[RMDB]
RNA sequence: GGGAACGACUCGAGUAGAGUCGAAAACUUGAGAGGACAACUCAAGAUAUCUUAACUGUCCACCAAUAAUAUCAUUUCUUAAACGUAAUCCUUUUCCUUCACACCUUGAACAGAUAUUCCACUCCAGAUUUACGAUAGCUGCUUCGGCUGUAACAAACGACUAGUGCGUAUUCGUACGCACUAGUCGAAAAGAAACAACAACAACAAC
Reactivity to 2A3 in 0.01 (KOAc 150mM, MgCl2 10mM, bicine 150mM(pH8.5), 24C), signal-to-noise 2, nucleotides 027 to 156: c000u010u000g000a000g030a000g090g000a010c050a300a300c070u010c010a010a070g000a040u200a140u070c100u030u140a040a050c020u000g000u000c000c000a020c020c000a040a100u090a230a000u120a070u210c120a030u020u130u130c020u070u160a070a040a010c050g040u030a090a070u050c000c000u000u050u050u000c000c000u000u100c050a050c000a010c040c000u000u040g060a070a000c010a040g100a080u030a100u070u030c010c000a040c010u000c010c010a050g000a080u100u070u000a050c010g000a000u020a070g020c060u040g000c040u020u060c010g040g000c000u090g020u150a090a090c090a130a080a110